[RMDB]
RNA sequence: GGGAACGACUCGAGUAGAGUCGAAAACGAUCCUCGAGAGAGGAUCGACGAGUCUUCGGACUCGAUUACCGCGUAGAUGUGCCGCGGGGCUACGAUGGUAUUGUGGGAAAGAAUACCAUUGUACCUUCUUGUCGUAGCCGAACAACUUGCACGUCCACAGCCAUUAAUACUUCGGUAUUAAUGGCUGAAAAGAAACAACAACAACAAC
Reactivity to DMS in 0.01 (KOAc 150mM, MgCl2 10mM, bicine 150mM(pH8.5), 24C), signal-to-noise 3, nucleotides 027 to 156: c040g030a000u000c000c000u000c020g010a300g000a300g020a040g030g010a010u000c010g020a040c020g010a030g010u000c000u000u000c270g050g000a040c000u000c000g000a090u000u000a220c010c030g000c030g010u010a140g010a030u000g010u000g000c000c060g010c000g000g010g010g000c040u010a020c020g010a100u000g010g000u010a030u000u010g010u010g020g020g010a160a180a260g020a160a160u000a050c000c010a000u000u000g000u000a000c020c020u000u010c130u010u010g000u000c030g040u020a030g040c010c020g020a070a010c060a080a100c120u010u000g000c010a010c020g000u000c010c060a280
Reactivity to 2A3 in 0.01 (KOAc 150mM, MgCl2 10mM, bicine 150mM(pH8.5), 24C), signal-to-noise 9, nucleotides 027 to 156: c020g000a000u010c000c000u010c010g060a060g000a000g000a000g040g000a000u000c000g000a010c000g000a000g000u000c000u040u150c240g090g010a000c010u000c000g010a050u120u180a080c000c000g000c000g000u030a050g000a010u010g000u000g010c000c000g010c010g040g030g010g000c000u000a000c000g000a010u110g000g010u010a010u010u040g000u030g010g020g040a070a230a130g130a100a090u080a090c000c000a000u000u020g000u000a000c000c000u160u210c110u110u290g040u020c000g000u000a000g000c000c000g010a040a010c050a020a060c050u050u080g000c010a000c000g010u000c010c020a040